RNA sequence: GGGAACGACUCGAGUAGAGUCGAAAAGCUGUUACAUCUACCAUAGGCUCUAAUGGAAUUGUGAAUAUUGGAGCUAACAUUCCUGCCUCUGGGUCUCCAAUUUGACUUGCAACACUUGCAUCAAUAAAAUCCCUCAUAGUUUCGACUAUGAGGGAUUAAAAGAAACAACAACAACAAC
Reactivity to DMS in 0.01 (KOAc 150mM, MgCl2 10mM, bicine 150mM(pH8.5), 24C), signal-to-noise 4, nucleotides 027 to 126: g000c060u020g000u000u000a070c090a110u020c020u010a080c050c000a050u010a080g020g010c020u010c030u000a010a010u010g000g000a130a090u020u030g010u010g010a160a140u050a050u000u000g020g010a030g020c070u010a050a100c120a090u000u010c030c000u000g010c020c050u000c020u020g010g010g000u000c010u010c020c060a010a080u040u000u010g010a050c080u020u030g020c040a050a070c120a070c130u020u000g030c040a110u010c050a040a010u010a060a080
Reactivity to 2A3 in 0.01 (KOAc 150mM, MgCl2 10mM, bicine 150mM(pH8.5), 24C), signal-to-noise 7, nucleotides 027 to 126: g020c050u020g050u110u070a050c030a090u040c030u080a070c010c030a090u050a090g030g040c000u000c030u100a040a070u090g050g090a070a140u200u110g120u100g140a150a070u160a040u130u080g050g010a020g000c000u000a040a020c000a050u070u050c000c000u030g040c000c010u040c010u030g010g010g020u020c010u000c020c020a040a050u060u050u070g070a070c060u020u050g010c030a080a040c040a090c200u050u050g000c010a030u020c010a040a040u070a150a140

This 177-nucleotide RNA was probed chemically with DMS and 2A3. The DMS profile rests on 7,227 reads. It was measured as part of the RMDB library OK1LIB. Values cover nucleotides 27 to 126.